[RMDB]
RNA sequence: GGGAACGACUCGAGUAGAGUCGAAAAACUGAACCGAGUAAAUAACGUUAUUUCUAAAAUUGGUGAAAUUGGUCCAAAAGAUUUUGGAAAGGUGAUGGGACUAACUGUUCAAGAUAUUUUGGAAGAAACUUCUCGUGAAGGUAUUACUUUAACUCAAUCCUGGAGAAGGAUUCGUCCUUCUCCAGGAAAAAGAAACAACAACAACAAC
Reactivity to 2A3 in 0.01 (KOAc 150mM, MgCl2 10mM, bicine 150mM(pH8.5), 24C), signal-to-noise 1, nucleotides 027 to 156: a000c010u010g040a010a010c010c000g040a020g040u020a000a190a220u030a030a100c000g000u060u000a070u070u140u020c030u040a000a020a110a070u120u090g100g000u070g020a050a010a000u010u020g010g010u020c000c010a000a000a160a080g040a060u100u150u060u120g040g000a080a010a020g000g020u080g020a080u140g060g000g060a010c030u010a060a000c040u060g080u050u070c000a000a000g000a030u010a070u060u020u000u010g030g040a000a000g000a110a040a040c060u140u060c090u040c060g020u060g030a010a000g040g000u060a090u050u120a040c010u010u080u260a080a030c020u140c070a000a100

Chemical mapping of a 207-nucleotide RNA with 2A3. Reactivities are given for positions 27 through 156. For 2A3, 511 sequencing reads were counted.